[RMDB]
RNA sequence: GGGAACGACUCGAGUAGAGUCGAAAAAAGCGUGGUGAGCGCGAAAGUGACGAGCGGCCCAAAAAUCGCGACGAUGAUGCCGCCAAGCGCGGGACCGACGCUACGGACCGUGUUGAAUCCGACAUUGAGAAGGGUGACGGCCGACGGCAGAUGGCGGCGGGUAUAACGUAUUCGUACGUUAUACCCGAAAAGAAACAACAACAACAAC
Reactivity to 2A3 in 0.01 (KOAc 150mM, MgCl2 10mM, bicine 150mM(pH8.5), 24C), signal-to-noise 4, nucleotides 027 to 156: a000a000g050c020g020u050g010g030u100g060a060g030c040g010c020g050a030a040a010g130u130g050a050c080g000a020g050c020g000g030c030c060c010a080a110a000a000a010u050c060g020c050g060a100c050g010a040u180g020a050u150g050c010c010g000c030c010a090a030g010c040g030c050g050g010g030a040c020c000g030a050c020g010c030u130a180c000g000g020a010c000c000g010u000g040u000u040g050a100a120u060c110c070g010a020c050a030u150u300g050a080g010a060a040g030g010g000u020g010a010c000g010g020c020c000g070a110c000g110g050c050a050g040a160u100g020g010c000g000g000
Reactivity to DMS in 0.01 (KOAc 150mM, MgCl2 10mM, bicine 150mM(pH8.5), 24C), signal-to-noise 3, nucleotides 027 to 156: a070a230g030c050g070u000g010g040u010g000a280g060c060g000c020g000a070a100a070g020u010g010a110c020g000a210g020c020g030g010c020c020c020a010a060a030a070a060u000c040g020c020g000a110c090g020a090u010g010a090u000g010c060c000g020c000c010a110a240g030c090g000c020g070g000g010a040c010c000g010a120c070g020c020u010a070c000g030g020a170c020c000g000u000g080u000u000g000a090a100u000c070c030g000a080c010a100u010u010g020a170g000a230a190g000g000g020u010g000a130c020g020g000c010c000g040a070c020g000g020c050a300g000a160u000g000g010c050g000g000
Chemical mapping of a 207-nucleotide RNA with 2A3 and DMS. Reactivities are given for positions 27 through 156. For 2A3 the reverse transcriptase was SuperScript II with manganese. Reactivities are rounded to 0.1 and cut off at 0 and 3. The RNA was probed in 150 mM KOAc, 10 mM MgCl2 and 150 mM bicine (pH 8.5) at 24 C. Source: RMDB library OK3TST, as collected in RNAgym. For DMS, 5,071 sequencing reads were counted.